[RMDB]
RNA sequence: GGGAACGACUCGAGUAGAGUCGAAAAAAAACCGAGAGGUUCAAGCUUACCGGGCAGAAAACUGGGGUCAGUAGUACUAAACAGCCCUAGUGGCAGUGACGAAGGUAGUACUUCAACAGCGUCACAACCAUUGGUCACGUUUCGACGUGACCAAUGGAAAAGAAACAACAACAACAAC
Reactivity to DMS in 0.01 (KOAc 150mM, MgCl2 10mM, bicine 150mM(pH8.5), 24C), signal-to-noise 2, nucleotides 027 to 126: a020a030a000a010c040c000g000a170g010a140g070g050u000u010c080a230a090g000c070u010u060a080c070c040g030g000g060c030a110g000a000a090a030a070c040u000g000g000g020g010u020c130a190g060u000a080g030u010a090c080u000a080a030a060c110a270g000c000c030c000u000a030g030u000g000g050c110a040g000u000g030a010c060g030a040a060g040g040u030a020g000u020a040c040u000u010c030a080a110c160a070g000c090g000u060c000a080c070a140a140
Reactivity to 2A3 in 0.01 (KOAc 150mM, MgCl2 10mM, bicine 150mM(pH8.5), 24C), signal-to-noise 2, nucleotides 027 to 126: a000a000a000a000c170c020g070a160g000a040g000g040u220u180c170a200a000g000c000u000u000a030c000c040g000g000g000c010a020g040a020a100a020a010c030u030g000g000g070g000u110c130a140g020u060a030g040u030a080c040u170a090a300a130c050a060g000c000c010c000u030a010g060u040g030g010c030a040g000u000g000a010c010g020a110a010g080g010u040a000g010u050a030c000u100u110c080a070a010c000a120g030c000g030u090c000a000c000a060a010
Record summary:
Chemical mapping of a 177-nucleotide RNA with DMS and 2A3. Reactivities are given for positions 27 through 126. It was measured as part of the RMDB library RFM100. In probing experiments dimethyl sulfate is read out at A N1 and C N3, which are open when not base-paired. The reactions ran in a buffer of 150 mM KOAc, 10 mM MgCl2 and 150 mM bicine (pH 8.5), at 24 C.